[RMDB]
RNA sequence: GGGAACGACUCGAGUAGAGUCGAAAAAUUUAAGCGCCAGGACGGUCACCUUUGGGGUGGUGACAAGUGUGAUCACUUGGGUGGUGGCUGUGUUUGCGCCUCUCCCAGGAAUCUCGUUUACCAGAUCAAUAUCAUAGGGAUUCGUCCCUAUGAUAUUAAAAGAAACAACAACAACAAC
Reactivity to DMS in 0.01 (KOAc 150mM, MgCl2 10mM, bicine 150mM(pH8.5), 24C), signal-to-noise 5, nucleotides 027 to 126: a100u030u020u040a130a160g000c030g020c010c050a020g000g000a030c010g010g010u000c000a010c000c000u010u030u030g010g000g010g030u010g010g010u000g010a040c020a200a130g020u060g020u010g000a050u010c030a020c000u000u000g000g020g010u010g000g010u010g000g000c030u010g010u000g010u000u000u000g000c020g000c010c020u010c090u000c010c000c000a170g010g000a080a040u020c110u000c030g000u010u000u010a090c030c020a130g010a090u020c140
Reactivity to 2A3 in 0.01 (KOAc 150mM, MgCl2 10mM, bicine 150mM(pH8.5), 24C), signal-to-noise 9, nucleotides 027 to 126: a000u180u220u130a080a010g000c000g000c010c010a000g010g020a010c010g000g010u010c000a010c000c000u080u160u210g100g020g010g000u030g030g000u020g050a010c020a050a130g210u170g020u030g220a040u050c000a000c000u020u030g160g010g040u060g020g050u010g000g000c010u010g010u010g100u030u030u050g010c010g000c000c000u030c010u000c000c000c000a020g050g050a050a050u060c040u020c080g040u050u060u090a200c040c020a040g010a110u120c050
Background
An RNA of 177 nucleotides, treated with DMS and 2A3 and read out base by base. The data come from the RNA Mapping Database (RMDB), library OK1LIB. The RNA was probed in 150 mM KOAc, 10 mM MgCl2 and 150 mM bicine (pH 8.5) at 24 C. For 2A3, 18,773 sequencing reads were counted. In probing experiments dimethyl sulfate is read out at A N1 and C N3, which are open when not base-paired.